[RMDB]
An RNA of 177 nucleotides, treated with 2A3 and DMS and read out base by base.
For DMS, 26,683 sequencing reads were counted.
For 2A3 the reverse transcriptase was SuperScript II with manganese.
Conditions: 150 mM KOAc, 10 mM MgCl2 and 150 mM bicine (pH 8.5), 24 C.
It was measured as part of the RMDB library OK2TRN.
For 2A3, 21,813 sequencing reads were counted.
RNA sequence: GGGAACGACUCGAGUAGAGUCGAAAAGGGAGCCGUAGCGUGCGUCGGUACGCACCAUCGCGGACCUCUUCGCAACCCGGCACCGCGGUGGCGGCCAGAUGGCCGAAAACACCCUCGAAGGCGAAUGAGAUGACUAAUAUUUCGAUAUUAGUCAUCUAAAAGAAACAACAACAACAAC
Reactivity to 2A3 in 0.01 (KOAc 150mM, MgCl2 10mM, bicine 150mM(pH8.5), 24C), signal-to-noise 8, nucleotides 027 to 126: g030g020g010a060g040c050c020g050u060a020g020c030g060u020g010c020g060u100c160g150g070u120a020c010g000c000a010c000c000a040u060c040g000c000g000g030a090c010c010u030c040u060u040c040g020c030a060a130c010c010c000g010g020c060a070c040c030g010c050g010g010u010g010g020c020g020g000c000c000a180g060a300u300g030g010c000c010g010a030a040a020a010c040a030c000c000c020u040c060g070a090a050g080g000c050g040a030a050u190g050
Reactivity to DMS in 0.01 (KOAc 150mM, MgCl2 10mM, bicine 150mM(pH8.5), 24C), signal-to-noise 9, nucleotides 027 to 126: g000g010g010a100g010c030c020g020u000a100g010c200g030u000g010c010g020u010c250g010g020u010a050c010g010c010a130c020c030a060u000c130g020c000g000g010a120c040c030u000c050u000u000c060g020c100a110a140c040c030c030g010g020c060a090c030c020g010c270g010g020u000g000g010c020g010g000c010c010a160g010a090u010g010g020c000c010g000a060a070a080a090c060a070c020c010c020u000c100g000a100a100g010g010c050g000a090a100u010g010